Record summary
The record gives the reactivity of an RNA of 177 nucleotides to DMS and 2A3. Conditions: 150 mM KOAc, 10 mM MgCl2 and 150 mM bicine (pH 8.5), 24 C. For 2A3, 1,855 sequencing reads were counted. DMS adducts were read by reverse transcription with MarathonRT.
RNA sequence: GGGAACGACUCGAGUAGAGUCGAAAAGGGGCGGUAUGCGAUCGAGGGGAUCGCGGUGAGCGGGCAUGGGCCGACGCUGGUCCUGGUGGACGAGGAGUGCGCGCCGCUUGGUCCUGCGCUCAUGUGGGCGUGGUGUAUGAUUCGUCAUACACCACGCAAAAGAAACAACAACAACAAC
Reactivity to DMS in 0.01 (KOAc 150mM, MgCl2 10mM, bicine 150mM(pH8.5), 24C), signal-to-noise 1, nucleotides 027 to 126: g010g020g000g010c090g020g010u010a040u000g000c010g000a030u010c010g000a140g030g000g000g010a060u000c030g040c030g020g000u010g000a050g020c040g010g000g020c070a090u010g020g000g000c050c050g000a090c120g010c050u010g000g000u000c030c010u020g020g010u000g000g020a060c010g000a090g000g010a110g020u010g020c030g000c150g010c040c030g020c120u000u000g000g020u000c020c000u000g010c030g000c040u000c010a070u010g030u000g000g000
Reactivity to 2A3 in 0.01 (KOAc 150mM, MgCl2 10mM, bicine 150mM(pH8.5), 24C), signal-to-noise 2, nucleotides 027 to 126: g000g010g010g000c090g020g040u160a110u210g020c020g000a020u020c060g000a160g000g090g050g030a020u060c020g000c000g000g030u040g020a040g000c060g000g060g030c060a110u140g010g020g020c000c000g010a070c080g000c090u090g030g010u010c000c010u060g090g040u160g040g000a020c040g040a030g120g010a090g000u110g040c030g000c020g000c030c010g080c050u010u060g020g010u000c000c010u050g000c020g030c000u000c040a070u200g060u150g120g050